[RMDB]
The data come from the RNA Mapping Database (RMDB), library M2RFPK. An RNA of 207 nucleotides, treated with 2A3 and DMS and read out base by base. The RNA was probed in 150 mM KOAc, 10 mM MgCl2 and 150 mM bicine (pH 8.5) at 24 C.
RNA sequence: GGGAACGACUCGAGUAGAGUCGAAAAAGGUUCGCUGUGGUGCAACUCUUAUUAGUAACUAAUCCAAAGCAAGUAUAGGAGAACAGGUUUUUAACUAUUUUUAGGCAGAUAAAAAAUACUAUUUGACAAAAUCGAUUGUCGUUCGCGACAAUCGAAAGUCAUUAACACAGUUCGCUGUGUUAAUGACAAAAGAAACAACAACAACAAC
Reactivity to 2A3 in 0.01 (KOAc 150mM, MgCl2 10mM, bicine 150mM(pH8.5), 24C), signal-to-noise 3, nucleotides 027 to 156: a010g030g000u030u020c010g000c020u000g010u020g010g010u010g000c020a040a030c040u030c040u090u120a100u060u110a060g080u050a050a040c060u050a100a050u030c030c020a100a030a040g010c060a070a030g010u040a040u080a080g020g040a010g000a050a010c040a040g030g030u020u030u030u080u080a060a020c010u070a100u100u080u000u050u080a020g040g000c000a000g030a090u130a010a070a020a010a010a050u060a050c050u100a080u110u080u090g090a050c030a020a110a040a110u020c010g000a000u010u000g000u000c010g000u020u020c170g000c020g070a000c000a010a000u000c000g010a000a000a000
Reactivity to DMS in 0.01 (KOAc 150mM, MgCl2 10mM, bicine 150mM(pH8.5), 24C), signal-to-noise 1, nucleotides 027 to 156: a080g000g010u000u010c050g010c020u020g010u000g020g060u010g000c030a080a100c070u000c050u000u000a060u010u000a090g050u000a060a100c020u010a100a160u000c060c130a100a130a200g020c020a050a090g030u000a140u010a040g020g020a060g000a020a090c040a130g020g000u000u000u000u000u000a080a080c040u000a050u000u000u020u000u000a070g030g020c010a030g010a090u020a000a010a010a080a090a040u010a040c000u000a180u000u020u000g050a150c030a060a060a100a120u010c000g010a020u000u000g020u000c000g000u000u000c190g000c000g000a020c000a030a010u000c000g000a010a010a100